[RMDB]
Structure probing data (DMS) for a 177-nucleotide construct. DMS adducts were read by reverse transcription with MarathonRT. For DMS, 936 sequencing reads were counted. Conditions: 150 mM KOAc, 10 mM MgCl2 and 150 mM bicine (pH 8.5), 24 C.

RNA sequence: GGGAACGACUCGAGUAGAGUCGAAAAAAGAUAUGGAUUCGGACGUCGCUUGGAUUUAUGGGAGGAACCGUGUCGGAAACGACACUCAGUACUCCCAUUGUCAGCGACGGUACGAAUCCUAAGUCAACUAUAAACCCUCCUUCGGGAGGGUUUAUAGAAAAGAAACAACAACAACAAC
Reactivity to DMS in 0.01 (KOAc 150mM, MgCl2 10mM, bicine 150mM(pH8.5), 24C), signal-to-noise 1, nucleotides 027 to 126: a150a080g010a050u020a300u010g010g000a030u000u010c000g000g010a150c010g000u000c000g050c000u010u000g010g000a020u000u000u000a010u000g020g000g000a060g000g000a160a080c300c300g010u000g030u000c000g010g000a100a090a190c000g010a030c010a000c000u000c000a040g000u000a150c000u000c010c020c030a010u000u010g020u030c030a050g000c020g000a000c000g000g000u030a040c000g010a000a010u000c000c050u000a000a150g010u000c030a080a210